Annotation:
The record gives the reactivity of an RNA of 207 nucleotides to 2A3. The RNA was probed in 150 mM KOAc, 10 mM MgCl2 and 150 mM bicine (pH 8.5) at 24 C. For 2A3, 786 sequencing reads were counted. It was measured as part of the RMDB library RSTRND. 2A3 adducts were read by reverse transcription with SuperScript II with manganese.
[RMDB]
RNA sequence: GGGAACGACUCGAGUAGAGUCGAAAACCUCCCGGCUGCAAGGUUAUUCACGUCAGCUGGCCUCCUGCCGGGUACCUUGGCAUGGGGCGAGAUCCAAGGGUGCUGGCCUUCCUUGCAGCGUGCGACUGCGCGGCGUGGAAGGUGAGAUCCAAAACAGCAUGACAACUACCUUCGGGUAGUUGUCAUGAAAAGAAACAACAACAACAAC
Reactivity to 2A3 in 0.01 (KOAc 150mM, MgCl2 10mM, bicine 150mM(pH8.5), 24C), signal-to-noise 2, nucleotides 027 to 156: c000c000u050c030c000c000g010g010c000u020g000c030a110a090g180g060u230u120a080u280u230c060a110c270g030u030c040a000g000c000u050g000g010c000c000u000c010c020u000g010c000c000g010g110g040u070a050c000c030u070u120g000g010c020a030u000g010g050g000g000c020g000a020g000a010u110c060c060a080a070g010g030g010u050g070c000u000g090g000c000c010u010u010c010c000u000u190g000c040a010g000c000g000u010g020c040g270a200c160u300g030c020g010c030g010g030c000g000u110g010g000a030a030g030g020u060g010a030g000a050u090c120c070a050a060a020a070c020a050g060